[RMDB]
Conditions: 150 mM KOAc, 10 mM MgCl2 and 150 mM bicine (pH 8.5), 24 C. Structure probing data (2A3 and DMS) for a 207-nucleotide construct. The DMS profile rests on 4,234 reads. For DMS the reverse transcriptase was MarathonRT. For 2A3, 2,534 sequencing reads were counted.
RNA sequence: GGGAACGACUCGAGUAGAGUCGAAAAUUCUGUGAGGAGAAGCUGCUUUUUAGGAAGGUAUGACUGUGGAGUUUCUGCAUAGAGAGAAAUCCUGGCUGUGCUUAUCUCCCAACAGAAAAGGAAGGCUGAAGCAGGGCAGGGGCUGUGACAGCAGCUGCCUACAGCUUCAUUUCGAUGAAGCUGUAGGAAAAGAAACAACAACAACAAC
Reactivity to 2A3 in 0.01 (KOAc 150mM, MgCl2 10mM, bicine 150mM(pH8.5), 24C), signal-to-noise 4, nucleotides 027 to 156: u040u020c020u030g020u040g040a070g040g010a010g010a030a020g020c010u040g020c030u120u080u050u140u190a070g060g020a070a040g040g010u100a090u140g090a140c040u050g020u080g060g030a060g040u050u050u000c020u030g050c060a060u130a060g070a010g010a000g020a050a060a010u010c000c010u030g050g000c030u050g030u020g060c010u080u070a040u110c020u010c000c010c000a040a040c010a010g010a010a060a010a010g040g010a060a020g030g010c040u030g020a020a000g030c010a010g020g040g000c030a010g000g010g040g010c000u030g020u070g060a030c020a010g020c020a010g010c030u070g010
Reactivity to DMS in 0.01 (KOAc 150mM, MgCl2 10mM, bicine 150mM(pH8.5), 24C), signal-to-noise 2, nucleotides 027 to 156: u000u000c020u020g030u000g000a130g040g010a060g020a080a120g010c020u000g020c080u010u010u000u020u000a090g010g000a100a040g020g010u010a030u010g030a090c030u020g000u000g000g010a080g010u000u000u010c020u010g030c040a200u000a140g010a170g040a090g000a040a050a060u000c030c020u000g010g010c010u000g030u000g050c020u000u000a100u010c030u010c010c000c020a090a140c020a050g000a040a040a100a090g000g030a060a080g010g020c040u000g000a020a180g010c040a110g000g000g050c090a070g010g000g020g000c030u010g010u010g000a140c060a080g030c020a050g000c050u000g010